[RMDB]
RNA sequence: GGGAACGACUCGAGUAGAGUCGAAAAUCCCGAAGACGCCGGGGACAUCUCGGAAUGAGAAAGGAGACAGGUGGAAGAAAAAGGGGUGGGCCCCCCGAUCCGAGGGGCCCGACGCCCGGAUCUGGAGAAACAAUGCUCUUCGGAGCAUUGAAAAGAAACAACAACAACAAC
Reactivity to 2A3 in 0.01 (KOAc 150mM, MgCl2 10mM, bicine 150mM(pH8.5), 24C), signal-to-noise 3, nucleotides 027 to 129: u010c000c000c000g030a060a030g090a000c040g020c050c000g030g010g000g020a010c020a120u030c020u010c050g010g070a020a020u110g020a020g040a020a060a010g040g010a030g000a020c010a030g050g040u050g030g040a070a050g030a050a080a030a020a010g020g020g010g000u070g010g000g020c010c000c010c030c000c010g030a080u060c040c030g020a010g000g000g020g000c000c020c000g010a020c020g060c010c000c020g000g000a020u030c010u080g040g000a030g050a010a010a000
Reactivity to DMS in 0.01 (KOAc 150mM, MgCl2 10mM, bicine 150mM(pH8.5), 24C), signal-to-noise 5, nucleotides 027 to 129: u020c030c010c000g020a090a060g020a070c180g030c040c060g040g010g000g030a080c100a100u020c030u020c090g020g010a060a050u030g000a090g000a040a100a050g010g010a060g000a040c090a010g010g020u000g020g000a110a030g000a050a040a090a250a070g000g000g020g020u010g070g000g000c040c000c030c000c010c000g000a100u020c150c040g050a080g020g030g000g040c020c010c000g000a000c040g010c050c010c000g000g000a070u000c050u000g030g020a080g010a100a090a140